RNA sequence: GGGAACGACUCGAGUAGAGUCGAAAAAAUAUGGGUGCCUAUGUUCCAGUCAUCUGUACCAGCAGACUUGCUCAUAAAAGAACUUGCAAGCAUCAACAUACUAGUGAAGCAGAUCUCUACGCCCAAAAUCCCUUAAUGUAUUCGUACAUUAAGGGAUAAAAGAAACAACAACAACAAC
Reactivity to 2A3 in 0.01 (KOAc 150mM, MgCl2 10mM, bicine 150mM(pH8.5), 24C), signal-to-noise 7, nucleotides 027 to 126: a000a000u250a060u040g010g010g020u030g020c020c010u070a060u120g060u040u050c030c020a010g040u030c010a050u020c030u030g030u060a080c040c010a040g010c020a010g030a080c010u020u030g010c000u010c050a050u130a170a150a030a040g060a070a040c040u060u050g000c040a030a030g000c000a040u070c020a010a090c010a050u160a100c020u050a030g060u010g090a050a000g040c030a020g010a100u000c020u000c000u040a030c040g020c000c000c010a020a060a020
Reactivity to DMS in 0.01 (KOAc 150mM, MgCl2 10mM, bicine 150mM(pH8.5), 24C), signal-to-noise 8, nucleotides 027 to 126: a070a080u000a040u010g010g010g020u000g010c050c030u000a080u010g010u000u000c030c040a080g010u000c050a040u000c020u000g010u000a080c100c080a090g000c060a060g010a080c040u000u000g010c030u000c070a070u010a060a060a100a090g010a070a070c110u000u000g010c050a040a050g010c060a050u000c070a060a060c080a070u010a060c090u000a070g010u000g010a080a080g010c030a050g000a050u000c020u000c030u000a090c140g000c010c000c020a060a060a100